Overview: An RNA of 207 nucleotides, treated with DMS and 2A3 and read out base by base. Values cover nucleotides 27 to 156. The DMS profile rests on 4,173 reads. The data come from the RNA Mapping Database (RMDB), library OK3TST. Conditions: 150 mM KOAc, 10 mM MgCl2 and 150 mM bicine (pH 8.5), 24 C.

RNA sequence: GGGAACGACUCGAGUAGAGUCGAAAACACCGGGCGGACCCCUCAGCUCUUGGUCCGUGGGUGGUUAAACUCGAAUGGAAGGGUUUAAUGAGGUGUACCACUCUUUGAUGUCUGCGUCUGUACAUCCAAGGGCGCCCGUUCCAGAGGGUAUUAAGGGGUAGAUAUUUACUUUCGAGUGAGUGUCUACAAAAGAAACAACAACAACAAC
Reactivity to DMS in 0.01 (KOAc 150mM, MgCl2 10mM, bicine 150mM(pH8.5), 24C), signal-to-noise 2, nucleotides 027 to 156: c020a090c040c000g020g010g060c020g000g000a050c020c000c030c050u010c060a170g010c030u010c050u010u000g020g030u000c040c040g040u000g000g030g040u000g010g000u000u000a020a010a040c000u000c010g030a170a140u010g010g010a150a240g010g010g010u020u000u010a050a050u010g000a070g030g020u000g010u000a100c010c030a050c000u000c020u000u020u000g010a040u000g010u000c010u010g010c080g080u010c040u010g020u000a050c030a040u000c000c060a010a070g000g030g000c040g040c020c040c010g010u000u010c080c030a140g020a210g000g010g000u000a080u000u000a060a090g030g020g030
Reactivity to 2A3 in 0.01 (KOAc 150mM, MgCl2 10mM, bicine 150mM(pH8.5), 24C), signal-to-noise 2, nucleotides 027 to 156: c010a010c010c010g000g250g000c010g010g020a020c000c000c000c000u040c050a030g030c020u010c010u120u160g000g000u000c010c010g030u030g030g000g000u020g000g000u010u110a060a030a000c000u030c020g030a070a070u060g050g040a030a030g030g000g000u030u030u070a070a030u090g010a010g010g020u030g010u020a030c020c000a020c010u010c000u000u030u040g010a010u020g020u010c010u030g060c000g070u030c020u070g030u030a010c000a010u000c010c010a000a010g000g000g000c020g020c000c000c000g050u040u010c010c000a020g030a030g010g000g000u040a060u060u120a050a010g060g010g010